[RMDB]
Conditions: 150 mM KOAc, 10 mM MgCl2 and 150 mM bicine (pH 8.5), 24 C. Structure probing data (DMS and 2A3) for a 177-nucleotide construct. For 2A3 the reverse transcriptase was SuperScript II with manganese.

RNA sequence: GGGAACGACUCGAGUAGAGUCGAAAAAGCGGGCUCGUGUUGUAGAUACCCGAGAUGGUGUUGCCCACAUUCGCCACACCCGAUCCCAACGCGCCGACGUUGAGCAAGCCCGAGACUCCUGAGGCUGCACUUCCGAUGUGUUCGCACAUCGGAAGUGAAAAGAAACAACAACAACAAC
Reactivity to DMS in 0.01 (KOAc 150mM, MgCl2 10mM, bicine 150mM(pH8.5), 24C), signal-to-noise 2, nucleotides 027 to 126: a100g020c020g000g000g000c300u000c030g010u020g010u030u000g000u050a120g000a050u000a090c120c050c000g020a010g000a130u050g000g010u000g000u000u000g000c000c020c150a110c080a110u000u000c030g000c030c010a070c080a090c000c000c000g000a090u000c020c040c010a070a170c150g010c040g040c000c010g000a140c040g000u000u010g020a150g000c070a090a010g010c000c010c000g000a040g000a120c020u050c000c000u010g000a110g040g000c070u010g050
Reactivity to 2A3 in 0.01 (KOAc 150mM, MgCl2 10mM, bicine 150mM(pH8.5), 24C), signal-to-noise 2, nucleotides 027 to 126: a000g030c040g000g000g010c020u030c150g060u050g010u050u120g040u030a070g040a130u130a080c000c030c040g010a020g000a040u090g020g030u030g030u030u070g020c000c060c010a090c000a030u140u120c020g010c040c000a030c000a000c040c010c000g040a030u010c000c000c010a030a010c030g040c000g020c000c060g020a060c040g050u030u000g000a030g090c080a080a010g010c040c000c020g010a030g010a010c060u060c030c000u070g000a090g030g000c030u040g000
Source: RMDB library OK1LIB, as collected in RNAgym. Reactivities are rounded to 0.1 and cut off at 0 and 3. The DMS profile rests on 1,971 reads.